The data come from the RNA Mapping Database (RMDB), library OK1LIB. Structure probing data (2A3 and DMS) for a 177-nucleotide construct. The reactions ran in a buffer of 150 mM KOAc, 10 mM MgCl2 and 150 mM bicine (pH 8.5), at 24 C. DMS adducts were read by reverse transcription with MarathonRT. Reactivities are given for positions 27 through 126.

RNA sequence: GGGAACGACUCGAGUAGAGUCGAAAACAGACGCGUGUUGAUGGCAGGGGUACGAAGCCAUACGCGCUUCUACAAGGCGCUGGCCGAAGAGGUGCGGGAGUUUCACGCCACCAAGAUCUGCGGCACGAGCAGUGUUGUGGUUCGCCACAACACUGCUAAAAGAAACAACAACAACAAC
Reactivity to 2A3 in 0.01 (KOAc 150mM, MgCl2 10mM, bicine 150mM(pH8.5), 24C), signal-to-noise 2, nucleotides 027 to 126: c070a040g130a100c010g000c000g020u050g000u050u070g090a230u070g090g000c030a020g000g000g000g040u030a030c090g040a050a000g000c010c010a060u130a300c050g020c000g000c000u000u000c010u070a120c030a110a020g040g000c040g080c250u090g300g010c000c000g040a040a010g000a020g010g010u010g000c000g010g010g010a300g010u010u000u040c060a090c150g090c000c000a100c040c000a070a040g060a140u060c040u010g000c000g030g000c000a010c050g040
Reactivity to DMS in 0.01 (KOAc 150mM, MgCl2 10mM, bicine 150mM(pH8.5), 24C), signal-to-noise 1, nucleotides 027 to 126: c120a040g060a060c110g000c020g000u000g050u080u010g040a070u000g000g010c060a090g000g010g020g070u060a110c120g060a050a070g000c000c000a110u000a120c230g000c000g000c000u000u000c030u050a120c300a060a300g000g000c000g000c050u160g040g000c040c030g000a100a050g010a000g110g000u000g000c020g010g000g000a120g000u000u010u000c000a200c000g000c070c000a060c000c060a080a080g000a120u000c070u000g000c000g000g080c070a040c080g040